[RMDB]
RNA sequence: GGGAACGACUCGAGUAGAGUCGAAAACGACCCAUACAAGGUUCCGCUGCCUGCAUUGUUCCAAGAGUGUCUUGGACAAAAGCAGGAAGUGGAACCUUGUUAAGGUCGGAACGAACUGCCUUAAGGAUAACAUCCAGCUAUUCGUAGCUGGAUGUUAAAAAGAAACAACAACAACAAC
Reactivity to DMS in 0.01 (KOAc 150mM, MgCl2 10mM, bicine 150mM(pH8.5), 24C), signal-to-noise 4, nucleotides 027 to 126: c020g000a000c010c000c010a160u020a010c000a010a010g010g000u000u000c000c000g020c000u000g010c000c010u000g000c000a220u010u000g000u030u020c000c000a020a000g000a300g020u010g000u000c010u000u000g000g000a010c000a010a020a090a300g030c000a000g010g010a030a000g010u010g000g000a000a000c000c000u000u000g000u010u000a260a120g020g010u000c000g020g000a060a140c110g010a080a090c160u020g010c030c030u010u010a090a090g000g020a210
Reactivity to 2A3 in 0.01 (KOAc 150mM, MgCl2 10mM, bicine 150mM(pH8.5), 24C), signal-to-noise 6, nucleotides 027 to 126: c010g000a000c030c000c000a010u030a050c000a000a000g010g000u000u000c000c000g000c000u020g040c000c000u000g010c000a050u010u040g050u160u080c000c000a000a010g070a010g150u300g090u120c010u010u000g000g000a000c010a000a020a010a010g000c000a000g000g000a010a000g000u000g000g000a000a000c000c000u000u000g000u000u000a010a000g000g000u000c000g000g010a040a010c020g040a050a030c020u150g060c020c020u180u140a120a060g110g020a090

Structure probing data (DMS and 2A3) for a 177-nucleotide construct. For DMS the reverse transcriptase was MarathonRT. Values cover nucleotides 27 to 126. Conditions: 150 mM KOAc, 10 mM MgCl2 and 150 mM bicine (pH 8.5), 24 C.